[RMDB]
RNA sequence: GGGAACGACUCGAGUAGAGUCGAAAAAUGUUCUACGAAUACGAUGGUAGCCUAAGCGUCAACGAUUCGGGCUACUACUUUGACUACCAGGACAGACGAGCUCUCCGUCCGCUCAAGGAUUACGCCACUCAUGGCCUAUCUUCGGAUAGGCCAUGAGAAAAGAAACAACAACAACAAC
Reactivity to DMS in 0.01 (KOAc 150mM, MgCl2 10mM, bicine 150mM(pH8.5), 24C), signal-to-noise 1, nucleotides 027 to 126: a100u000g000u000u000c050u000a040c110g000a090a070u010a080c070g030a120u000g020g000u020a050g000c000c010u000a110a080g020c110g020u000c270a080a110c080g000a080u000u000c090g030g000g010c000u000a020c010u000a010c170u000u000u000g050a050c040u000a040c110c110a140g000g020a080c020a070g010a080c130g000a070g010c050u000c070u020c050c040g010u010c010c020g010c100u000c100a040a040g000g010a080u000u010a070c060g000c030c120a150
The record gives the reactivity of an RNA of 177 nucleotides to DMS.
For DMS, 718 sequencing reads were counted.
Values cover nucleotides 27 to 126.
Conditions: 150 mM KOAc, 10 mM MgCl2 and 150 mM bicine (pH 8.5), 24 C.